[RMDB]
RNA sequence: GGGAACGACUCGAGUAGAGUCGAAAAAUCGGAGCCAUGCGCGCACGACGUGCGAGGCGAACGAACGCGUCGACUGAUCGAACCCAUGACGUUGACGCCCGUUUUCGCGCGGCACGUCCCGUCGACAUACCCGUGGAUCAUUCGUGAUCCACGGGUAAAAAGAAACAACAACAACAAC
Reactivity to 2A3 in 0.01 (KOAc 150mM, MgCl2 10mM, bicine 150mM(pH8.5), 24C), signal-to-noise 1, nucleotides 027 to 126: a000u040c010g000g030a070g050c040c030a130u290g060c080g000c000g000c060a050c070g020a040c000g020u010g010c000g040a260g060g000c020g010a010a000c010g010a070a020c020g000c000g030u000c000g030a000c000u090g040a300u100c030g010a110a150c010c050c050a010u070g020a000c020g010u000u000g000a010c000g010c000c000c000g000u020u070u090u060c000g020c040g030c070g050g030c000a000c010g000u000c000c000c010g120u100c050g020a040c010a130
Reactivity to DMS in 0.01 (KOAc 150mM, MgCl2 10mM, bicine 150mM(pH8.5), 24C), signal-to-noise 2, nucleotides 027 to 126: a090u000c100g010g030a200g000c030c030a130u000g000c080g000c070g000c060a130c170g000a020c010g020u000g030c000g020a220g100g000c020g000a010a020c020g030a100a090c300g000c000g000u000c000g020a030c000u000g020a190u030c150g000a110a080c120c180c070a120u000g000a150c220g000u000u010g000a040c000g000c020c130c020g000u030u010u000u000c000g030c050g000c040g020g000c020a010c040g000u000c020c070c050g000u000c000g000a120c130a120
The data come from the RNA Mapping Database (RMDB), library OK2TST. Chemical mapping of a 177-nucleotide RNA with 2A3 and DMS. Values cover nucleotides 27 to 126. The DMS profile rests on 995 reads.